The data come from the RNA Mapping Database (RMDB), library M2RFPK. The record gives the reactivity of an RNA of 207 nucleotides to DMS and 2A3. The RNA was probed in 150 mM KOAc, 10 mM MgCl2 and 150 mM bicine (pH 8.5) at 24 C. The 2A3 profile rests on 7,972 reads.
RNA sequence: GGGAACGACUCGAGUAGAGUCGAAAAGCUUCCGUCGAACGCGAAAGACGGACGGCGGCCAUGAGUCGCAACGCAAAGCCGCGGCAAGUGGAGUUAGCGAGAAGAGACUAGGCUUUGGUUUCUUCAAAUUAGUGAGUGUGGUUCGCCACACUCACAAGUUGUACAUAACGUUCGCGUUAUGUACAACAAAAGAAACAACAACAACAAC
Reactivity to DMS in 0.01 (KOAc 150mM, MgCl2 10mM, bicine 150mM(pH8.5), 24C), signal-to-noise 3, nucleotides 027 to 156: g000c030u000u010c000c000g060u000c000g040a030a160c060g020c010g010a200a150a280g000a050c020g010g000a200c040g030g020c000g010g030c030c010a060u000g000a300g010u000c000g000c010a040a040c000g010c060a150a160a250g010c020c010g000c000g040g010c020a030a300g020u000g020g010a130g020u000u000a070g040c010g000a220g020a120a080g010a120g000a030c010u000a070g000g000c050u010u020u010g010g000u000u000u000c010u000u000c020a050a090a110u000u000a210g030u010g000a030g000u010g020u000g010g010u000u050c260g000c000c000a010c000a010c000u000c000a000c000a000a080
Reactivity to 2A3 in 0.01 (KOAc 150mM, MgCl2 10mM, bicine 150mM(pH8.5), 24C), signal-to-noise 7, nucleotides 027 to 156: g010c010u060u020c010c000g010u010c000g030a080a030c030g020c030g160a240a060a050g120a090c010g010g000a000c020g000g000c010g010g000c000c000a030u050g010a010g020u020c000g010c030a080a070c060g040c130a120a130a040g050c060c040g000c040g000g010c020a030a030g010u020g010g040a090g040u090u120a050g050c100g040a060g040a210a040g070a020g010a020c030u050a050g030g030c000u060u050u050g050g010u000u000u010c010u020u030c040a040a080a150u150u070a040g010u010g000a000g000u000g000u000g010g040u020u040c150g030c060c000a010c000a000c000u000c000a000c000a000a010